[RMDB]
RNA sequence: GGGAACGACUCGAGUAGAGUCGAAAAUUGCAGUUACUGUAAUCAUCCUCAACUGGGAUGGUGUAAACCCACCCUCCCAUCAGGGGUCACAUGAGGUUGCCUUUAAUGAGAAGAUAGACUGCUAAGGUUAGGGUCCCUGUCUGCCUAAGGUUGCUGCUCACGAUAAGGGAUUCGUCCCUUAUCGUGAAAAAGAAACAACAACAACAAC
Reactivity to 2A3 in 0.01 (KOAc 150mM, MgCl2 10mM, bicine 150mM(pH8.5), 24C), signal-to-noise 2, nucleotides 027 to 156: u060u030g030c020a020g020u180u180a180c040u150g120u120a030a030u020c060a030u040c030c000u020c000a070a050c120u040g000g000g000a010u000g100g000u000g020u040a110a220a120c020c010c020a020c000c000c000u000c030c030c000a010u030c050a010g000g000g010g090u120c050a060c040a210u050g030a010g000g000u020u030g000c020c000u090u130u140a100a070u160g050a050g040a090a040g020a060u130a080g040a060c020u020g000c070u080a080a000g060g000u000u170a050g000g000g000u060c000c000c030u000g030u000c010u010g000c000c010u030a090a010g200g000u000u030g030c020u030g050c010
Reactivity to DMS in 0.01 (KOAc 150mM, MgCl2 10mM, bicine 150mM(pH8.5), 24C), signal-to-noise 1, nucleotides 027 to 156: u030u000g000c040a080g010u010u000a140c100u040g040u030a150a080u020c020a140u010c020c030u000c020a090a150c260u020g040g020g000a040u010g010g000u000g000u000a100a070a070c060c000c010a040c010c000c050u000c000c000c080a080u000c050a150g000g000g010g000u030c090a110c050a100u000g030a070g030g000u000u000g010c050c020u000u000u000a130a130u000g000a130g020a070a050g000a050u000a040g000a040c020u010g030c030u020a050a150g010g010u000u000a040g020g020g040u010c030c050c040u010g010u000c010u000g000c000c010u000a050a050g040g030u000u000g030c020u000g030c090
An RNA of 207 nucleotides, treated with 2A3 and DMS and read out base by base. 2A3 adducts were read by reverse transcription with SuperScript II with manganese. The data come from the RNA Mapping Database (RMDB), library OK3TST. Reactivities are rounded to 0.1 and cut off at 0 and 3.